[RMDB]
RNA sequence: GGGAACGACUCGAGUAGAGUCGAAAAUUUGAUUUAUGUGGGUGGUGCCUCAUGGGAGAUGCCCCAUCCUCACGGGCGUGCUGCCUUUCAGCUGGCACUGUGGCUCCCCGCUCCAUUGCUCCAUCAGCCCUCUGUUACCAUUCGUGGUAACAGAGGGAAAAGAAACAACAACAACAAC
Reactivity to DMS in 0.01 (KOAc 150mM, MgCl2 10mM, bicine 150mM(pH8.5), 24C), signal-to-noise 2, nucleotides 027 to 126: u010u000u010g010a120u000u010u000a050u030g030u000g030g000g020u000g010g000u000g010c030c020u000c070a120u010g000g020g000a080g000a060u000g030c020c030c010c020a170u000c020c010u000c040a070c140g000g000g010c080g010u000g020c060u020g020c040c030u000u000u000c070a100g020c080u000g040g000c040a040c060u000g000u010g010g000c060u020c040c020c020c080g010c030u000c080c040a050u010u010g000c010u000c020c070a120u010c110a170g010
Reactivity to 2A3 in 0.01 (KOAc 150mM, MgCl2 10mM, bicine 150mM(pH8.5), 24C), signal-to-noise 1, nucleotides 027 to 126: u040u000u140g050a030u060u120u190a150u170g040u070g010g030g000u020g010g000u000g000c010c000u030c030a070u090g090g130g000a200g010a060u100g010c030c010c010c030a020u000c000c000u020c040a070c000g020g020g010c070g010u080g030c000u000g000c030c000u020u110u110c000a020g010c010u090g060g000c020a050c080u070g020u070g070g000c000u040c000c030c000c020g010c010u010c000c000a040u010u080g000c000u020c030c010a120u080c000a050g080